This 177-nucleotide RNA was probed chemically with DMS and 2A3. The 2A3 profile rests on 4,808 reads. The reactions ran in a buffer of 150 mM KOAc, 10 mM MgCl2 and 150 mM bicine (pH 8.5), at 24 C. As a SHAPE reagent, 2A3 marks flexible, mostly unpaired nucleotides at the ribose 2'-OH.
RNA sequence: GGGAACGACUCGAGUAGAGUCGAAAAGCAGGCGGUUCAUGAAGGGGCGCUUAUAGGUCUUUUCAAUAUGCGCGCGGGCAUGAUCGACCAGAUGCAUAUAAUUGACGCCGGACGGGCAUGUGGUCAACCAUGCUAAAUCAUUCGUGAUUUAGCAUGGAAAAGAAACAACAACAACAAC
Reactivity to DMS in 0.01 (KOAc 150mM, MgCl2 10mM, bicine 150mM(pH8.5), 24C), signal-to-noise 5, nucleotides 027 to 126: g010c070a110g000g020c020g010g010u010u010c040a060u010g010a080a060g000g000g000g020c020g000c070u010u000a070u010a090g020g010u000c060u010u000u000u010c060a090a080u000a040u000g010c030g010c050g020c150g010g010g010c030a050u010g010a060u010c080g010a070c010c010a060g010a100u010g010c020a060u000a070u010a080a110u010u000g010a090c060g020c030c030g000g000a080c110g010g000g010c050a020u000g010u000g000g010u010c050a100a250
Reactivity to 2A3 in 0.01 (KOAc 150mM, MgCl2 10mM, bicine 150mM(pH8.5), 24C), signal-to-noise 4, nucleotides 027 to 126: g040c050a030g060g000c020g080g020u090u100c070a030u110g040a040a010g060g010g050g000c060g030c100u130u160a130u110a160g110g000u010c010u070u060u050u050c040a050a040u070a050u180g000c020g000c020g010c030g000g010g010c050a040u090g010a080u120c050g050a050c000c010a020g010a120u050g020c030a010u080a010u040a200a160u070u090g030a020c040g020c050c010g040g030a030c040g020g000g040c010a020u110g030u050g090g010u020c010a000a010